An RNA of 177 nucleotides, treated with 2A3 and DMS and read out base by base. For 2A3 the reverse transcriptase was SuperScript II with manganese.
[RMDB]
RNA sequence: GGGAACGACUCGAGUAGAGUCGAAAACAUCCUUGCUGGGCAGUGGGUGCUGUGCUAGCAGGACAGGCGGACGGCUGGCAACUGUCUCUGCAUCCCUGGAGCCUGGCAUAGGGCCAAGUCACACGGGAAGAACGCGUAAAUUCGUUUACGCGUUCUUAAAAGAAACAACAACAACAAC
Reactivity to 2A3 in 0.01 (KOAc 150mM, MgCl2 10mM, bicine 150mM(pH8.5), 24C), signal-to-noise 2, nucleotides 027 to 126: c030a050u090c000c000u010u030g020c000u000g010g000g000c010a050g050u180g060g040g000u030g000c040u040g000u060g090c020u030a010g010c000a000g030g050a050c020a030g050g160c060g070g030a080c040g050g030c010u020g030g040c020a050a040c070u090g030u100c010u020c020u160g000c010a030u060c010c010c020u040g110g130a070g040c000c000u010g010g000c000a010u060a010g010g010g010c050c000a050a040g020u070c010a010c020a030c150g000g010g040
Reactivity to DMS in 0.01 (KOAc 150mM, MgCl2 10mM, bicine 150mM(pH8.5), 24C), signal-to-noise 3, nucleotides 027 to 126: c190a180u000c010c000u000u010g020c020u010g000g020g040c000a080g040u000g010g010g000u000g000c020u000g000u000g020c060u000a040g030c020a080g020g010a120c070a070g010g020c100g030g000a160c050g010g000c020u000g000g010c050a060a150c090u000g010u000c090u010c080u000g000c030a040u000c010c000c010u000g000g010a200g010c000c010u000g010g020c000a040u010a040g020g010g010c080c040a100a090g010u020c060a080c100a110c120g010g000g000